[RMDB]
Structure probing data (2A3 and DMS) for a 207-nucleotide construct. Values cover nucleotides 27 to 156. The data come from the RNA Mapping Database (RMDB), library RSTRND. The reactions ran in a buffer of 150 mM KOAc, 10 mM MgCl2 and 150 mM bicine (pH 8.5), at 24 C.

RNA sequence: GGGAACGACUCGAGUAGAGUCGAAAACUUCUGGUAGCUUCGGCUCCAGCAAUCACUAGGGGAUGCCUGUAAACCCGAACUGAUUGUCAUACAGAACAGGAUCGUCGCGUAGCACGUUGUGGGCGAAGUGACUAAAACUUACACAACUCAUCCAAAGCAGCAAUGUAUUGUUCGCAAUACAUUGCUGAAAAGAAACAACAACAACAAC
Reactivity to 2A3 in 0.01 (KOAc 150mM, MgCl2 10mM, bicine 150mM(pH8.5), 24C), signal-to-noise 5, nucleotides 027 to 156: c020u120u090c000u020g070g090u300a020g000c010u040u040c230g050g000c010u000c000c000a000g010c010a000a000u000c000a000c020u010a010g000g010g000g010a010u060g010c000c010u010g000u040a050a110a080c000c000c000g000a010a010c000u000g000a000u030u000g030u060c020a030u130a230c140a050g110a120a010c010a000g020g010a000u010c000g000u000c000g000c010g050u100a010g000c010a000c050g010u000u010g000u010g010g000g000c010g040a100a010g010u010g010a000c000u010a000a000a010a030c040u140u300a040c010a000c000a000a020c020u050c090a130u060c060c080a080a070a130g040
Reactivity to DMS in 0.01 (KOAc 150mM, MgCl2 10mM, bicine 150mM(pH8.5), 24C), signal-to-noise 2, nucleotides 027 to 156: c070u010u010c080u000g010g000u000a020g020c000u000u010c170g040g000c010u000c000c010a040g000c020a020a040u000c030a030c030u000a300g000g020g000g030a110u000g010c050c070u000g010u000a100a100a300c000c020c000g000a090a130c120u000g030a040u000u000g010u000c040a080u010a110c030a110g000a100a130c080a110g030g000a130u010c100g000u000c000g010c020g020u010a180g020c010a040c120g020u010u000g000u000g020g000g000c040g010a080a300g030u000g000a120c050u000a050a050a060a070c110u010u000a050c040a030c000a020a010c020u000c080a070u000c030c020a040a120a230g000